[RMDB]
RNA sequence: GGGAACGACUCGAGUAGAGUCGAAAAUGAUGACGCCACCUCUGACGGCCGGUGAUGGAGCCUUCCUUGCUGUCGAAGGUAAUGGACAGCAAAACAGAUGCGGGCGGACGCUGUCGAUGUGUGACUACUGGUUGAACUAGUUCGCUAGUUCAACCAGAAAAGAAACAACAACAACAAC
Reactivity to 2A3 in 0.01 (KOAc 150mM, MgCl2 10mM, bicine 150mM(pH8.5), 24C), signal-to-noise 4, nucleotides 027 to 126: u230g050a070u130g030a010c040g030c030c000a060c040c010u030c040u030g020a020c060g030g010c010c000g080g090u090g020a130u160g080g040a060g010c000c000u030u020c000c000u000u010g010c010u000g000u010c010g040a150a050g120g050u300a120a040u210g120g000a000c010a000g010c000a000a000a050a010c100a020g020a030u140g010c050g000g040g000c000g000g020a060c020g000c080u070g000u030c030g020a090u090g060u010g010u040g040a020c010u080a060
Reactivity to DMS in 0.01 (KOAc 150mM, MgCl2 10mM, bicine 150mM(pH8.5), 24C), signal-to-noise 2, nucleotides 027 to 126: u070g010a090u000g000a160c060g000c040c000a090c030c060u010c040u000g030a080c100g010g000c080c050g020g020u020g000a100u020g000g000a100g020c020c000u000u000c060c020u010u000g000c000u000g000u000c010g020a110a110g050g010u040a080a110u020g010g000a000c020a010g000c010a000a020a020a020c160a020g000a040u030g020c100g000g000g010c020g000g050a190c080g000c030u020g010u000c040g010a090u000g030u010g020u010g030a120c030u000a130
About this RNA: The data come from the RNA Mapping Database (RMDB), library OK1LIB. Structure probing data (2A3 and DMS) for a 177-nucleotide construct. The 2A3 profile rests on 2,659 reads. DMS adducts were read by reverse transcription with MarathonRT.